Structure probing data (2A3 and DMS) for a 207-nucleotide construct. For DMS the reverse transcriptase was MarathonRT. For 2A3 the reverse transcriptase was SuperScript II with manganese. Values cover nucleotides 27 to 156. The reactions ran in a buffer of 150 mM KOAc, 10 mM MgCl2 and 150 mM bicine (pH 8.5), at 24 C.
RNA sequence: GGGAACGACUCGAGUAGAGUCGAAAAUUCGAAACGGAACAGACAUCCCAGAACAAAGAAGAAUUUCGUUCUCAAAGGGCAGUAUGGACUGUCUUGCCAAACGGAGAAAAAACUCACAGGAUGCUGAUAACGGAAAAUACAAACUUUUUAAUUGUCGACCAUGCCUAAUAUUCGUAUUAGGCAUGGUAAAAGAAACAACAACAACAAC
Reactivity to 2A3 in 0.01 (KOAc 150mM, MgCl2 10mM, bicine 150mM(pH8.5), 24C), signal-to-noise 4, nucleotides 027 to 156: u130u070c060g010a040a060a060c060g020g060a060a020c030a010g210a110c030a020u020c010c020c000a020g040a100a030c130a090a050a030g150a080a050g040a060a050u030u090u040c020g020u020u020c010u000c010a130a150a020g010g000g020c010a000g020u160a200u240g060g140a020c000u020g000u000c000u010u030g040c010c050a050a080a020c090g080g000a020g040a110a050a010a030a030a010c010u020c020a040c010a000g020g020a000u030g010c010u010g010a020u070a050a010c010g040g080a040a050a060a070u160a040c050a000a110a030c010u110u080u090u110u190a150a180u230u120g060u050c030g000
Reactivity to DMS in 0.01 (KOAc 150mM, MgCl2 10mM, bicine 150mM(pH8.5), 24C), signal-to-noise 2, nucleotides 027 to 156: u000u000c020g000a110a070a160c040g020g040a100a170c070a180g020a110c010a040u000c010c000c060a170g010a080a240c050a090a100a150g030a190a140g000a210a090u000u000u000c040g050u000u000c030u030c040a060a110a090g020g000g010c020a030g000u000a110u000g040g010a110c020u000g000u000c000u000u000g010c080c070a040a030a090c060g020g000a050g020a010a040a070a110a040a070c060u000c040a040c130a110g000g000a050u000g020c020u010g010a100u010a020a170c010g020g000a040a030a050a060u000a300c060a020a020a110c090u000u000u020u000u000a030a090u010u000g020u000c010g000